[RMDB]
RNA sequence: GGGAACGACUCGAGUAGAGUCGAAAAGAUAUGGACGUCAGAACGCGACAGCCGAGUUGCUUAGGGAAUUCGGAAACGAAUUCCCUAAGCAAUAUCUGUCGAACUACGUUCCUGACGUCCUAAGUCACACGUUUCUAGUGUUCGCACUAGAAACGUGAAAAGAAACAACAACAACAAC
Reactivity to DMS in 0.01 (KOAc 150mM, MgCl2 10mM, bicine 150mM(pH8.5), 24C), signal-to-noise 1, nucleotides 027 to 126: g030a070u010a300u020g010g010a030c010g010u000c000a030g000a030a030c020g000c050g000a010c050a020g000c300c220g010a110g000u000u000g010c000u000u000a000g000g040g010a030a000u000u020c000g010g000a070a120a140c000g030a040a000u020u000c000c020c000u000a000a000g000c020a000a000u010a020u000c000u010g010u000c020g000a060a140c060u000a300c040g000u000u010c130c130u000g020a030c000g050u010c000c000u000a020a140g020u000c050a300
Source information:
Structure probing data (DMS) for a 177-nucleotide construct. The RNA was probed in 150 mM KOAc, 10 mM MgCl2 and 150 mM bicine (pH 8.5) at 24 C. Source: RMDB library TTRINS, as collected in RNAgym.